[RMDB]
RNA sequence: GGGAACGACUCGAGUAGAGUCGAAAAGGCUUAUCCCGGGGAAUCCGGCCAAGUCCCGAAAUGUCUAGUCCCGUGGUCUCACUUCCAAAAGGAGGAGCGGGGGGACUUGGAACACGAGGGGACCAGUAUAGGGAACAGUUCGCUGUUCCCAAAAGAAACAACAACAACAAC
Reactivity to DMS in 0.01 (KOAc 150mM, MgCl2 10mM, bicine 150mM(pH8.5), 24C), signal-to-noise 4, nucleotides 027 to 129: g020g030c010u020u030a010u020c040c010c000g000g000g000g000a120a050u000c050c070g030g000c060c050a050a070g010u020c010c030c000g030a050a060a060u050g000u000c050u050a030g000u030c010c020c040g000u020g030g030u020c000u030c060a160c020u040u030c100c180a100a060a160a190g010g030a040g000g000a150g000c030g000g000g000g010g000g000a000c050u000u000g010g030a020a060c110a060c000g030a140g010g000g010g010a070c030c030a010g050u070a120u060a120
Reactivity to 2A3 in 0.01 (KOAc 150mM, MgCl2 10mM, bicine 150mM(pH8.5), 24C), signal-to-noise 6, nucleotides 027 to 129: g010g000c030u100u090a060u100c000c010c030g000g000g000g030a070a070u040c030c000g020g020c030c010a010a020g010u010c010c000c000g030a040a040a040u160g030u050c030u060a040g070u030c010c010c010g030u030g020g110u040c010u020c010a220c030u040u070c060c020a140a100a050a020g010g010a000g000g000a020g010c020g010g000g000g010g000g010a000c000u000u030g030g020a020a040c080a000c040g030a070g010g000g000g010a010c020c010a010g060u120a080u170a150

Source: RMDB library 15KLIB, as collected in RNAgym. Structure probing data (DMS and 2A3) for a 170-nucleotide construct. For DMS, 16,265 sequencing reads were counted. The RNA was probed in 150 mM KOAc, 10 mM MgCl2 and 150 mM bicine (pH 8.5) at 24 C. DMS adducts were read by reverse transcription with MarathonRT.